[RMDB]
Chemical mapping of a 177-nucleotide RNA with DMS and 2A3. Values cover nucleotides 27 to 126. DMS adducts were read by reverse transcription with MarathonRT.

RNA sequence: GGGAACGACUCGAGUAGAGUCGAAAAUGUUAAGAGAACCGCAAUUUGUGGAUCGCUCUUAUUGAUAGCGAUUUUUAUGAUGAAUAGUUGGAGCGGUAUUCAGAGCGGGCAUAACGCAUUUCGUCCACCUAUGAGCAGGGUUCGCCCUGCUCAUAGGAAAAGAAACAACAACAACAAC
Reactivity to DMS in 0.01 (KOAc 150mM, MgCl2 10mM, bicine 150mM(pH8.5), 24C), signal-to-noise 3, nucleotides 027 to 126: u010g020u000u030a050a100g010a180g010a130a040c020c000g000c020a090a150u000u030u020g010u020g030g000a010u000c030g000c010u000c030u010u000a160u010u010g000a130u030a020g000c050g000a120u050u000u000u000u000a070u080g020a070u000g000a030a010u000a090g000u010u010g030g000a030g000c000g020g020u000a040u020u010c040a090g020a150g000c020g000g000g000c070a070u010a070a070c150g000c020a030u000u000u000c140g000u000c010c050a140
Reactivity to 2A3 in 0.01 (KOAc 150mM, MgCl2 10mM, bicine 150mM(pH8.5), 24C), signal-to-noise 4, nucleotides 027 to 126: u040g010u000u010a090a010g110a060g060a130a010c020c010g000c030a100a100u070u050u130g080u050g040g020a020u010c000g010c000u000c010u050u100a170u090u150g090a080u250a110g000c010g020a030u000u000u000u000u100a280u170g170a080u120g020a010a030u070a080g140u160u130g000g000a010g000c040g030g020u020a080u020u010c010a030g020a020g090c010g000g010g010c050a070u090a090a030c090g020c030a030u000u050u080c090g040u030c000c010a030
The RNA was probed in 150 mM KOAc, 10 mM MgCl2 and 150 mM bicine (pH 8.5) at 24 C.